[RMDB]
RNA sequence: GGGAACGACUCGAGUAGAGUCGAAAACGACGUCGCUGGGCCACAUGCGCUCAUGUCACUACCCACCUCCACUGAAGCGCGCACGGUGGAGAGGUGACCGCUGAGAUGUGUGUGGCCUGUGCUGAAGCGCGCACGGCAACCGAAAGGUGCGUUAAAACAUUAUAUAGGCCUUCGGGCCUAUAUAAUGAAAAGAAACAACAACAACAAC
Reactivity to 2A3 in 0.01 (KOAc 150mM, MgCl2 10mM, bicine 150mM(pH8.5), 24C), signal-to-noise 2, nucleotides 027 to 156: c050g110a010c080g040u160c040g010c040u120g000g010g000c000c000a000c010a010u020g010c020g020c030u030c050a050u110g010u020c000a010c020u160a140c060c030c030a070c030c010u000c000c010a010c000u010g000a190a030g020c000g000c010g000c020a010c010g020g020u020g010g000a000g000a000g010g000u010g000a000c040c000g040c140u090g000a050g020a300u110g060u000g000u000g000u020g010g050c000c000u000g000u020g000c000u020g010a070a030g000c000g000c000g000c000a010c010g010g020c020a020a050c020c020g070a070a040a030g010g010u030g020c000g000u010u040a040a150a000a010
Reactivity to DMS in 0.01 (KOAc 150mM, MgCl2 10mM, bicine 150mM(pH8.5), 24C), signal-to-noise 2, nucleotides 027 to 156: c050g040a150c050g010u000c010g030c040u000g030g060g040c000c000a050c010a030u000g020c000g050c060u010c000a060u010g020u000c000a000c000u010a070c020c010c030a300c040c000u000c010c040a050c010u000g010a040a080g020c000g030c010g000c050a300c040g040g020u000g000g000a020g000a120g000g040u000g000a030c000c050g050c100u000g000a050g020a070u000g020u000g060u000g010u000g000g000c020c020u000g020u010g020c010u010g040a030a080g010c020g010c030g000c010a300c020g000g000c000a030a030c030c000g000a080a120a210g020g020u000g040c010g000u000u010a090a090a050a180
Source: RMDB library RNAMAK, as collected in RNAgym. The record gives the reactivity of an RNA of 207 nucleotides to 2A3 and DMS. Reactivities are given for positions 27 through 156. The reactions ran in a buffer of 150 mM KOAc, 10 mM MgCl2 and 150 mM bicine (pH 8.5), at 24 C. The 2A3 profile rests on 2,099 reads.